[RMDB]
RNA sequence: GGGAACGACUCGAGUAGAGUCGAAAACGGGCAUACCGGGGUCUCAGAUUCCCGUAAAACACUGAAUUCAAAUAGUCGCAAACGACGAAACUUACGCUUUAGCCGCUUAAGGCUAGCCGUUGCAGCAGUCGGUCAAUGGGCUGUGUGGUGAAAGCCAGUAAAAAUCCAAGUUCGCUUGGAUUUUUACAAAAGAAACAACAACAACAAC
Reactivity to DMS in 0.01 (KOAc 150mM, MgCl2 10mM, bicine 150mM(pH8.5), 24C), signal-to-noise 2, nucleotides 027 to 156: c030g000g020g020c030a140u010a060c100c020g050g030g060g020u000c030u010c080a070g000a220u000u010c000c020c020g000u000a050a090a090a090c020a120c070u020g010a120a140u000u020c070a040a080a100u000a090g000u010c020g010c100a100a040a090c020g040a010c010g010a080a020a010c020u000u010a130c110g010c070u000u000u000a040g020c000c010g030c130u000u000a100a140g060g020c030u000a080g000c030c040g000u010u010g040c020a130g020c060a180g010u000c030g000g000u020c090a100a100u010g030g000g030c020u000g000u020g030u000g010g030u020g000a110a080a150g020c020c000a090
Reactivity to 2A3 in 0.01 (KOAc 150mM, MgCl2 10mM, bicine 150mM(pH8.5), 24C), signal-to-noise 3, nucleotides 027 to 156: c020g000g040g000c030a040u060a160c050c060g010g010g000g020u020c050u000c050a010g020a090u160u100c000c000c000g060u120a020a040a020a010c010a020c020u030g030a080a060u110u070c050a060a060a130u080a090g030u000c020g050c140a070a160a110c080g060a010c020g030a090a010a010c040u130u110a020c040g020c010u120u080u090a020g010c010c020g110c210u230u170a130a020g010g000c000u020a000g000c010c000g040u020u060g010c010a010g000c000a010g020u030c030g070g050u050c050a050a100u060g050g010g000c020u010g000u010g000u010g080g000u020g030a060a010a010g020c020c000a000
The data come from the RNA Mapping Database (RMDB), library RSTRND. Structure probing data (DMS and 2A3) for a 207-nucleotide construct. Reactivities are given for positions 27 through 156. For 2A3, 1,627 sequencing reads were counted. 2A3 is a SHAPE reagent: it acylates the 2'-hydroxyl of flexible nucleotides of all four kinds.